This 177-nucleotide RNA was probed chemically with 2A3 and DMS. The data come from the RNA Mapping Database (RMDB), library OK2TST. For 2A3, 3,123 sequencing reads were counted. DMS adducts were read by reverse transcription with MarathonRT. Reactivities are given for positions 27 through 126.
[RMDB]
RNA sequence: GGGAACGACUCGAGUAGAGUCGAAAAGUGACCUAUUCCUCUUAUGGGUUAACAAGCUUGGAGAACUGUCCUGUGCCUUACUGUACUGUGCCUCCCAGACUCAGUUAUUUGGGUCCACAGGGGUAGACUUCCUUUACCAGUUCGCUGGUAAAGGAAGAAAAGAAACAACAACAACAAC
Reactivity to 2A3 in 0.01 (KOAc 150mM, MgCl2 10mM, bicine 150mM(pH8.5), 24C), signal-to-noise 3, nucleotides 027 to 126: g030u010g030a010c000c000u020a080u060u080c010c010u070c010u140u100a070u170g030g000g020u050u050a090a040c040a070a050g040c040u080u090g030g030a070g000a140a070c050u040g050u080c000c010u010g020u040g040c000c000u050u070a060c010u060g020u090a040c020u020g050u060g130c020c000u010c010c010c000a040g030a180c000u010c030a010g030u030u040a130u150u160u040g030g000g000u000c050c020a040c020a020g000g010g010g010u010a000g030a030
Reactivity to DMS in 0.01 (KOAc 150mM, MgCl2 10mM, bicine 150mM(pH8.5), 24C), signal-to-noise 4, nucleotides 027 to 126: g010u010g020a060c010c010u010a100u000u010c060c040u020c110u010u010a110u010g020g020g000u010u000a060a080c080a090a080g010c070u010u000g000g010a100g010a100a090c070u000g000u000c030c020u000g000u000g000c060c010u000u000a050c100u000g010u000a070c040u000g020u010g020c120c030u000c010c030c040a160g000a040c040u000c020a040g010u000u020a150u010u010u000g010g000g000u000c060c040a050c100a050g000g000g010g020u010a050g000a180